An RNA of 207 nucleotides, treated with DMS and 2A3 and read out base by base.
DMS adducts were read by reverse transcription with MarathonRT.
The RNA was probed in 150 mM KOAc, 10 mM MgCl2 and 150 mM bicine (pH 8.5) at 24 C.
Reactivities are given for positions 27 through 156.
Reactivities are rounded to 0.1 and cut off at 0 and 3.
For 2A3, 6,327 sequencing reads were counted.

[RMDB]
RNA sequence: GGGAACGACUCGAGUAGAGUCGAAAACAUCACUUAUUGAUCCAAAAUUUUGAUCAACGGAACAAGUUACCCUAGGGAUAACAGCGCAAUCCUGUUCUAGAGUUCCUAUCGACAAUAGGGUUUACGACCUCGAUGUUGGAUCAGGACACCCAAAUGGCACAUAUUUAACCUUCGGGUUAAAUAUGUGAAAAGAAACAACAACAACAAC
Reactivity to DMS in 0.01 (KOAc 150mM, MgCl2 10mM, bicine 150mM(pH8.5), 24C), signal-to-noise 4, nucleotides 027 to 156: c040a130u000c080a130c020u010u010a130u010u000g010a020u000c010c060a030a050a090a140u000u000u000u000g010a040u000c010a070a080c060g010g020a050a080c050a070a210g020u000u000a040c000c000c010u010a120g030g030g010a050u000a030a030c030a100g000c100g030c070a070a030u010c050c000u000g020u000u000c050u000a110g020a220g010u010u000c050c070u000a180u000c020g020a100c060a050a110u010a050g020g020g010u000u000u000a130c110g000a080c000c020u000c060g000a070u010g010u000u000g020g020a050u000c040a020g000g000a110c030a080c000c000c010a030a050a080u000g010g010
Reactivity to 2A3 in 0.01 (KOAc 150mM, MgCl2 10mM, bicine 150mM(pH8.5), 24C), signal-to-noise 8, nucleotides 027 to 156: c010a060u130c050a030c100u160u160a080u100u100g000a010u010c030c050a040a100a230a300u130u160u080u130g040a040u040c010a010a050c060g060g000a040a050c050a150a050g040u090u100a070c020c010c010u060a060g000g020g030a060u050a080a020c010a020g040c030g010c120a030a100u090c010c010u030g030u030u030c050u080a030g010a030g110u060u030c000c000u030a050u060c030g050a020c020a050a060u070a120g020g020g000u020u060u060a060c100g070a020c010c020u050c040g020a020u040g030u040u010g080g010a010u010c050a010g000g010a010c010a070c020c010c010a040a090a040u080g070g000